[RMDB]
RNA sequence: GGGAACGACUCGAGUAGAGUCGAAAAGCCAGAUACGCGAGAUGGCCAACCAAGCAGUGGAGCCCUGCGAGCUGGGCAACGCUUUCCGUUCUGAGCACUUCAAUAUCACCCCUGCUAUGGUGCUAAAAUGAGUACUGCCUUUCGAGGCAGUACUCAUAAAAGAAACAACAACAACAAC
Reactivity to 2A3 in 0.01 (KOAc 150mM, MgCl2 10mM, bicine 150mM(pH8.5), 24C), signal-to-noise 2, nucleotides 027 to 126: g030c000c000a040g010a110u160a110c010g030c080g030a030g040a150u090g080g000c010c000a040a020c000c000a030a010g060c020a010g100u080g070g100a050g010c020c000c030u050g050c010g070a060g010c070u080g000g010g000c040a080a070c030g040c000u010u050u030c030c040g060u100u090c010u100g060a040g020c020a060c050u080u120c130a050a070u050a060u240c000a060c030c000c010c020u000g010c000u020a090u110g000g030u030g010c010u050a040a070a100
Reactivity to DMS in 0.01 (KOAc 150mM, MgCl2 10mM, bicine 150mM(pH8.5), 24C), signal-to-noise 1, nucleotides 027 to 126: g040c040c000a030g000a260u000a000c180g110c270g000a050g000a150u000g000g030c070c060a180a090c000c090a110a020g000c100a130g000u000g000g010a300g000c040c000c000u000g020c150g000a100g020c040u010g020g000g000c000a040a160c190g040c040u000u060u000c000c010g000u000u040c110u000g000a060g000c000a150c020u000u000c180a050a150u000a200u000c000a050c000c000c010c000u000g120c060u000a030u050g000g000u000g030c020u000a000a070a040
Annotation:
Chemical mapping of a 177-nucleotide RNA with 2A3 and DMS. Reactivities are rounded to 0.1 and cut off at 0 and 3. The data come from the RNA Mapping Database (RMDB), library OK1LIB. The DMS profile rests on 1,071 reads. 2A3 adducts were read by reverse transcription with SuperScript II with manganese. The 2A3 profile rests on 1,017 reads.